The record gives the reactivity of an RNA of 207 nucleotides to 2A3. It was measured as part of the RMDB library RNAMAK.

[RMDB]
RNA sequence: GGGAACGACUCGAGUAGAGUCGAAAAGCGUACUACUUUCGACGAAGAUAUGAAAUUCGAUAAGUUCUUCCCAAAUAGGAAGAACUUUUGACGAAUAUGUAGUAUCAGAGAAAGUAUCGCAAAGUGCGGUCACAUACUUCGGUAUGUGACCGCACAACUCAACUUGAAGAUUCGUCUUCAAGUUGAGAAAAGAAACAACAACAACAAC
Reactivity to 2A3 in 0.01 (KOAc 150mM, MgCl2 10mM, bicine 150mM(pH8.5), 24C), signal-to-noise 1, nucleotides 027 to 156: g000c000g010u080a090c030u000a010c010u000u010u050c080g170a230c000g060a140a070g020a020u020a010u040g090a050a030a040u010u020c040g010a030u010a030a000g000u000u000c000u010u020c030c000c010a300a300a110u300a070g000g000a000a000g000a000a000c000u010u010u010u040g110a060c000g010a000a000u060a050u150g000u000a000g000u000a000u010c000a000g010a000g000a060a020a000g000u010a000u300c000g000c020a000a060a010g000u010g000c020g000g000u000c000a000c010a030u010a040c030u060u160c260g080g000u000a000u000g000u010g000a000c000c010g000c000a000c000a000a010